[RMDB]
RNA sequence: GGGAACGACUCGAGUAGAGUCGAAAAGAUAUGGACUGAAUGCUCGAUAAGUCGUAUGUCGGAAACGACAUCGACUUUUGACGAGCGCGUCCUAAGUCAAACAAGGAUACCUUCGGGUAUCCUUGAACAUCAGUCUAAUGUUCGCAUUAGACUGAUGAAAAGAAACAACAACAACAAC
Reactivity to 2A3 in 0.01 (KOAc 150mM, MgCl2 10mM, bicine 150mM(pH8.5), 24C), signal-to-noise 5, nucleotides 027 to 126: g020a010u080a050u140g000g000a010c060u150g090a300a150u300g000c000u000c010g060a080u040a180a030g000u010c010g060u300a040u020g000u000c010g020g010a060a070a080c000g000a000c000a010u000c000g000a000c000u030u040u050u080g170a060c010g000a000g000c010g010c000g000u000c000c000u020a150a010g070u050c050a090a060a130c010a000a030g010g000a010u010a000c020c000u160u260c300g100g000g000u000a000u000c000c000u000u000g000a000a000
Reactivity to DMS in 0.01 (KOAc 150mM, MgCl2 10mM, bicine 150mM(pH8.5), 24C), signal-to-noise 9, nucleotides 027 to 126: g010a040u000a300u010g000g000a010c010u010g020a050a070u010g010c000u000c000g010a140u000a020a010g010u000c000g010u020a010u000g010u000c000g010g000a100a080a150c000g010a010c000a000u000c010g000a010c000u000u000u010u010g010a140c100g010a010g010c000g010c090g010u000c000c000u000a040a100g000u000c030a110a100a300c010a000a010g000g000a010u000a000c000c000u000u010c230g030g010g010u000a000u000c000c000u000u000g000a070a170